[RMDB]
RNA sequence: GGGAACGACUCGAGUAGAGUCGAAAAGUCAUGUACUCUAGCUAGCUACUAGGAUCAUCAUGGAUCCGCUGCGAGCACGAUCGACAUGCGUGAUCUCUAGUGUGAGGUACCAUGGGAUCACAUGCAGCCCACGUCUGAGGUUCGCCUCAGACGUGGGAAAAGAAACAACAACAACAAC
Reactivity to DMS in 0.01 (KOAc 150mM, MgCl2 10mM, bicine 150mM(pH8.5), 24C), signal-to-noise 1, nucleotides 027 to 126: g030u000c000a010u000g010u000a110c140u000c050u000a160g050c000u010a040g000c100u000a070c080u000a050g000g010a000u000c000a130u000c120a080u010g000g000a040u000c070c050g000c020u000g000c200g000a140g010c080a020c130g000a080u000c160g000a100c140a020u000g010c190g040u000g000a040u000c040u000c000u030a130g010u000g040u000g030a120g050g000u000a040c000c030a050u000g000g000g020a000u000c040a050c010a070u000g030c070a200g000
Reactivity to 2A3 in 0.01 (KOAc 150mM, MgCl2 10mM, bicine 150mM(pH8.5), 24C), signal-to-noise 1, nucleotides 027 to 126: g090u070c000a040u050g000u070a050c010u020c030u080a030g030c000u040a040g010c010u050a120c000u060a110g010g000a030u030c040a020u030c010a040u190g060g000a060u000c020c080g000c070u050g000c060g080a080g000c010a000c050g010a080u030c070g140a070c040a050u090g080c040g000u010g040a040u000c050u020c010u100a130g090u040g050u050g200a230g150g130u060a050c070c040a050u060g000g000g010a020u040c040a020c000a010u060g000c000a020g090